[RMDB]
RNA sequence: GGGAACGACUCGAGUAGAGUCGAAAAGUCAAGAGGGCUGAAAGGUCGUCUAAACCACGUCCAAAGCAAUAAUAGCGAGAUUGUGGGGAAUGAACAAUUCGAUUAAGGGUAGGCUCGCCCGCAAGUGCUGGAGGAAAGAUUUCGAUCUUUCCUCCAGAAAAGAAACAACAACAACAAC
Reactivity to 2A3 in 0.01 (KOAc 150mM, MgCl2 10mM, bicine 150mM(pH8.5), 24C), signal-to-noise 1, nucleotides 027 to 126: g020u000c010a000a040g040a050g090g000g000c020u060g040a040a010a070g080g030u010c020g000u000c110u020a030a020a030c020c000a000c000g000u000c060c010a170a140a010g050c070a070a090u200a300a060u140a150g020c030g000a030g020a040u300u250g000u020g000g020g050g010a040a060u110g000a020a000c020a070a130u020u130c020g000a000u040u180a130a060g100g000g000u000a020g090g040c020u010c020g000c010c020c000g000c050a020a030g090u080g140
Reactivity to DMS in 0.01 (KOAc 150mM, MgCl2 10mM, bicine 150mM(pH8.5), 24C), signal-to-noise 3, nucleotides 027 to 126: g010u000c040a090a050g010a050g020g010g000c010u000g000a050a100a140g000g020u000c020g000u010c010u000a050a260a170c050c060a040c050g010u000c000c090a110a120a230g000c020a050a090u000a130a120u000a130g000c040g000a080g010a050u010u010g050u000g020g000g000g020a100a120u010g010a060a050c080a030a160u000u000c010g010a060u010u010a060a110g000g000g000u010a050g000g000c080u000c060g000c000c000c000g000c270a060a030g010u000g000
The record gives the reactivity of an RNA of 177 nucleotides to 2A3 and DMS. For DMS the reverse transcriptase was MarathonRT. Conditions: 150 mM KOAc, 10 mM MgCl2 and 150 mM bicine (pH 8.5), 24 C.